[RMDB]
RNA sequence: GGGAACGACUCGAGUAGAGUCGAAAACCCGUUUUGUUCGCAAAACGGGACUCAUCUUUGCUUGGCAGCAUAGCAGGUGAUGGCUGGACUGCUGGCUUAUCCUUGGAGGCAGUUUCGACUGCCUCAACUUUCCUGAUAUCUUCGGAUAUCAGGAAAGAAAAGAAACAACAACAACAAC
Reactivity to 2A3 in 0.01 (KOAc 150mM, MgCl2 10mM, bicine 150mM(pH8.5), 24C), signal-to-noise 4, nucleotides 027 to 126: c000c010c000g000u010u000u010u010g030u010u050c210g010c090a000a020a000a000c010g010g010g030a050c020u020c050a180u030c070u070u120u090g030c040u050u230g060g020c020a010g000c010a080u090a080g000c020a020g020g130u130g120a130u130g120g000c010u020g000g050a170c020u020g000c010u000g030g000c010u030u100a110u100c020c040u020u130g210g010a000g000g000c010a000g000u020u050u120c170g060a030c000u000g030c000c010u000c000a000a000
Reactivity to DMS in 0.01 (KOAc 150mM, MgCl2 10mM, bicine 150mM(pH8.5), 24C), signal-to-noise 3, nucleotides 027 to 126: c000c010c000g010u000u000u000u000g010u000u010c160g020c000a010a010a010a010c000g020g010g010a120c080u000c090a080u000c110u010u000u000g010c020u000u000g020g010c080a040g010c120a120u010a020g010c020a040g010g010u010g010a140u030g010g000c010u000g000g010a190c030u000g010c000u000g010g000c010u010u000a050u000c030c050u000u010g030g010a020g010g000c000a000g010u000u000u020c190g010a040c000u000g010c000c000u000c000a010a040
Source: RMDB library M2PK50, as collected in RNAgym. An RNA of 177 nucleotides, treated with 2A3 and DMS and read out base by base. The DMS profile rests on 3,991 reads.